RNA sequence: GGGAACGACUCGAGUAGAGUCGAAAAGAAAGGGAAUCCGUGCAUCCAAUAGACACCUGCACCCCCAUGGCCAGGCUGGUCUCGGACCCCUGACCUCAGGUGAUCCGUCCGCCUUGACCUCCCAAAGUGCUGGGGUUACAGGCAUGAGCCGCCGCAAAUUUACUAGCAGUUUCGACUGCUAGUAAAUAAAAGAAACAACAACAACAAC
Reactivity to 2A3 in 0.01 (KOAc 150mM, MgCl2 10mM, bicine 150mM(pH8.5), 24C), signal-to-noise 2, nucleotides 027 to 156: g050a050a040a000g010g000g010a060a020u050c110c050g020u020g010c030a090u060c050c030a080a060u150a170g100a050c030a050c100c000u040g000c020a070c000c030c000c000c020a050u080g010g000c030c030a010g030g000c050u120g050g000u060c070u040c120g010g010a020c040c070c000c000u030g120a260c020c080u190c010a010g020g000u030g000a220u020c010c000g030u000c000c000g000c010c020u030u050g040a120c000c010u010c030c030c010a070a050a010g090u140g000c090u080g000g000g000g000u000u010a080c070a060g000g040c020a050u090g050a000g050c030c040g000c000c010g030c070a100a110
Reactivity to DMS in 0.01 (KOAc 150mM, MgCl2 10mM, bicine 150mM(pH8.5), 24C), signal-to-noise 2, nucleotides 027 to 156: g020a080a080a100g020g020g000a120a030u000c020c010g040u000g020c050a130u000c020c050a090a200u000a120g000a140c030a020c010c020u000g000c040a140c000c000c010c020c040a150u010g010g000c000c010a040g010g010c010u000g040g000u000c060u000c050g050g010a050c010c010c000c010u000g000a090c110c140u000c020a020g000g000u000g010a020u010c020c050g020u000c020c020g020c020c010u000u000g000a030c030c020u010c030c030c020a050a060a140g020u000g010c010u000g020g000g050g010u000u000a070c060a040g040g010c020a060u000g000a120g020c010c030g020c040c000g000c070a070a120
This 207-nucleotide RNA was probed chemically with 2A3 and DMS. For DMS, 4,541 sequencing reads were counted. Reactivities are given for positions 27 through 156. Source: RMDB library OK3TST, as collected in RNAgym.